[RMDB]
RNA sequence: GGGAACGACUCGAGUAGAGUCGAAAAUGUGGUUUGCAUUUGAGACUGGUUUGGCAUACAUGCUCUAUACCUCGGCCUUCAACUGGUUGUUGUUGGCAGGUACAUUGCAUUAUUUCUUUGCACAGACGACGCUAGCAGUUCGCUGCUAGCAAAAGAAACAACAACAACAAC
Reactivity to 2A3 in 0.01 (KOAc 150mM, MgCl2 10mM, bicine 150mM(pH8.5), 24C), signal-to-noise 3, nucleotides 027 to 129: u070g040u030g030g210u080u080u280g010c020a080u000u000u090g080a060g030a050c080u050g050g000u070u050u040g010g000c000a030u030a050c060a010u150g000c020u000c030u060a060u020a020c000c000u030c100g130g000c000c000u000u050c000a030a030c040u070g270g010u160u200g040u000u000g000u000u010g050g000c000a000g000g000u010a010c030a050u020u050g030c010a000u020u040a070u030u120u020c040u020u030u060g040c040a060c000a090g090a050c060g010a010c050
Reactivity to DMS in 0.01 (KOAc 150mM, MgCl2 10mM, bicine 150mM(pH8.5), 24C), signal-to-noise 3, nucleotides 027 to 129: u020g030u020g000g100u030u040u050g000c040a050u010u000u010g030a150g050a060c090u010g070g030u040u030u030g010g080c080a080u020a060c170a080u030g020c000u020c050u040a120u020a030c010c000u010c170g000g000c000c010u010u000c010a010a020c020u000g060g030u000u000g040u000u000g070u060u070g010g030c010a000g000g050u030a070c000a130u000u040g020c010a030u000u000a070u050u040u000c130u120u030u000g010c050a070c070a120g030a000c070g000a100c160

Description: Conditions: 150 mM KOAc, 10 mM MgCl2 and 150 mM bicine (pH 8.5), 24 C. This 170-nucleotide RNA was probed chemically with 2A3 and DMS. The DMS profile rests on 9,168 reads.